[RMDB]
RNA sequence: GGGAACGACUCGAGUAGAGUCGAAAAUCAUUGGCUUCGCUGCGCGCAGCGUUGCCUAGGCUUCAGAUGCUUCGUACUGUUGCCAACGUUGCAAUUUCCAAACGCUAAUGCGAAAGUGUGCAAACAAACCUGCAAAUGGUUUCGACCAUUUGCAGGUAAAAGAAACAACAACAACAAC
Reactivity to 2A3 in 0.01 (KOAc 150mM, MgCl2 10mM, bicine 150mM(pH8.5), 24C), signal-to-noise 1, nucleotides 027 to 126: u050c030a050u060u130g000g020c010u020u010c020g030c000u010g000c140g010c000g020c020a000g000c000g030u030u010g010c030c000u030a050g000g000c000u050u010c010a020g030a150u090g100c050u060u100c060g060u060a070c000u040g040u050u010g020c020c010a040a060c030g030u060u040g000c030a000a000u020u020u060c020c000a150a000a000c020g000c060u160a090a050u150g000c030g050a070a010a040g060u050g000u030g060c010a010a130a010c010a000a150
Reactivity to DMS in 0.01 (KOAc 150mM, MgCl2 10mM, bicine 150mM(pH8.5), 24C), signal-to-noise 2, nucleotides 027 to 126: u000c100a170u000u010g010g000c020u000u000c000g010c000u000g010c090g030c300g000c040a020g020c020g030u000u010g010c040c000u010a040g020g020c040u000u000c000a020g000a100u010g000c050u010u010c130g000u060a100c060u000g020u000u010g020c020c010a050a080c130g040u000u000g020c120a040a110u010u010u000c020c020a060a050a140c090g010c030u000a090a080u020g000c000g010a030a030a080g000u000g010u000g010c080a030a050a150c130a110a080
Annotation
Structure probing data (2A3 and DMS) for a 177-nucleotide construct. Source: RMDB library M2PK90, as collected in RNAgym. The reactions ran in a buffer of 150 mM KOAc, 10 mM MgCl2 and 150 mM bicine (pH 8.5), at 24 C. For 2A3, 1,324 sequencing reads were counted.